[RMDB]
Chemical mapping of a 207-nucleotide RNA with 2A3 and DMS. Conditions: 150 mM KOAc, 10 mM MgCl2 and 150 mM bicine (pH 8.5), 24 C. It was measured as part of the RMDB library ARCHII. 2A3 adducts were read by reverse transcription with SuperScript II with manganese.

RNA sequence: GGGAACGACUCGAGUAGAGUCGAAAACUUCUCUAAUUCUCAAGGAGGUUUAUUCGAGAUUAUUGAGAGUCGUUGGCUUCCAUAGAUGUUCUUAGCUGAGGAAGUUCAAUGUAUGAUUACUAGGGACUAAGCAUGUAGAGGUUAGCAGGGAGUUUACCACUUGAAACAAGUUCGCUUGUUUCAAGUGAAAAGAAACAACAACAACAAC
Reactivity to 2A3 in 0.01 (KOAc 150mM, MgCl2 10mM, bicine 150mM(pH8.5), 24C), signal-to-noise 3, nucleotides 027 to 156: c010u070u020c020u000c020u070a150a240u280u060c050u030c100a070a060g050g020a050g030g020u080u140u130a080u060u110c040g010a010g000a070u010u150a030u110u190g040a110g000a000g020u000c000g020u020u000g020g030c000u040u000c000c000a050u050a030g060a020u060g060u090u090c030u110u090a050g020c010u010g110a050g050g000a010a000g000u070u190c030a030a020u040g060u110a080u120g060a040u070u140a070c060u030a030g010g010g010a010c020u020a040a020g020c030a020u050g030u090a020g030a010g040g020u010u040a020g000c020a010g000g020g020a030g010u020u070u030a040c010
Reactivity to DMS in 0.01 (KOAc 150mM, MgCl2 10mM, bicine 150mM(pH8.5), 24C), signal-to-noise 2, nucleotides 027 to 156: c000u010u000c010u020c000u000a010a080u000u000c060u000c030a100a100g020g010a030g040g010u010u010u000a070u030u000c030g020a150g030a120u010u000a090u010u000g000a150g010a030g020u000c030g050u000u010g010g010c010u000u010c010c000a130u000a120g020a100u000g020u000u000c020u000u000a050g020c050u010g030a180g000g000a060a040g010u000u000c060a040a060u000g020u030a090u010g000a140u010u000a060c040u010a090g010g020g000a060c050u010a020a070g010c040a060u000g020u020a120g000a040g000g030u000u000a060g020c030a040g020g010g020a050g040u000u000u020a130c090